Overview: The record gives the reactivity of an RNA of 177 nucleotides to 2A3 and DMS. The reactions ran in a buffer of 150 mM KOAc, 10 mM MgCl2 and 150 mM bicine (pH 8.5), at 24 C.
RNA sequence: GGGAACGACUCGAGUAGAGUCGAAAAACGGAGCUAGUAUUAACCUACUGUUUGUCAAUGAGGUUUCCUCCUCGUCAGAGCUAGUAACGAAUUGCUGUGUGUAGUCUUUGCCCAUCCCCUGAGAUGGGCGUUACUGAUUUUUCGAAAUCAGUAACGCAAAAGAAACAACAACAACAAC
Reactivity to 2A3 in 0.01 (KOAc 150mM, MgCl2 10mM, bicine 150mM(pH8.5), 24C), signal-to-noise 9, nucleotides 027 to 126: a000c040g030g000a010g000c040u030a020g070u080a180u160u130a100a060c020c030u050a060c020u100g080u170u190u100g170u120c070a080a100u150g020a030g010g020u040u070u060c010c010u030c000c010u020c020g040u040c040a010g000a010g060c020u050a010g020u050a100a000c060g050a100a070u060u060g000c040u010g010u020g020u000g010u090a090g040u060c020u040u060u080g020c000c000c010a010u010c010c000c010c060u140g030a070g000a210u020g000g010
Reactivity to DMS in 0.01 (KOAc 150mM, MgCl2 10mM, bicine 150mM(pH8.5), 24C), signal-to-noise 9, nucleotides 027 to 126: a090c070g000g000a220g000c030u000a030g010u000a080u020u010a070a110c080c080u000a080c080u010g010u010u010u010g010u010c100a090a080u020g000a060g010g010u010u010u010c090c070u010c020c010u000c040g010u010c080a080g000a090g010c020u000a040g000u010a040a180c090g000a120a120u010u000g010c020u000g010u000g000u010g010u000a070g010u000c040u000u000u010g010c020c000c000a030u000c010c020c150c130u020g010a090g010a030u000g000g000